Conditions: 150 mM KOAc, 10 mM MgCl2 and 150 mM bicine (pH 8.5), 24 C. Structure probing data (2A3) for a 207-nucleotide construct. It was measured as part of the RMDB library OK3TST. The 2A3 profile rests on 565 reads.

RNA sequence: GGGAACGACUCGAGUAGAGUCGAAAAGAGGACAAAAAGCUUGUGUACCUAGGUGGGUAUGCAAAAGGCCAAGCCCGUCACCAAGGAUAUUAGGUGAAGAGAGCAGUAGCUGAAAUGUCUUGAGAACAAUGAUUAUGAGCUUAACUGAGACAAUGGCUCUCCUGCUACUGUUCGCAGUAGCAGGAGAAAAAGAAACAACAACAACAAC
Reactivity to 2A3 in 0.01 (KOAc 150mM, MgCl2 10mM, bicine 150mM(pH8.5), 24C), signal-to-noise 1, nucleotides 027 to 156: g040a000g010g010a020c040a010a190a000a010a010g060c020u020u000g030u000g000u010a070c060c050u100a170g080g120u220g100g040g080u000a000u010g010c000a000a070a000a000g100g000c000c000a070a000g000c010c020c020g010u010c000a010c030c050a010a020g120g000a090u060a150u090u000a160g000g000u000g010a070a000g140a000g000a000g000c040a030g060u040a000g000c010u030g010a000a210a000u040g030u000c000u010u040g060a070g000a090a030c010a070a110u120g000a010u040u090a000u110g040a000g000c000u050u060a030a000c020u100g010a050g000a070c020a080a040u020g000g000c000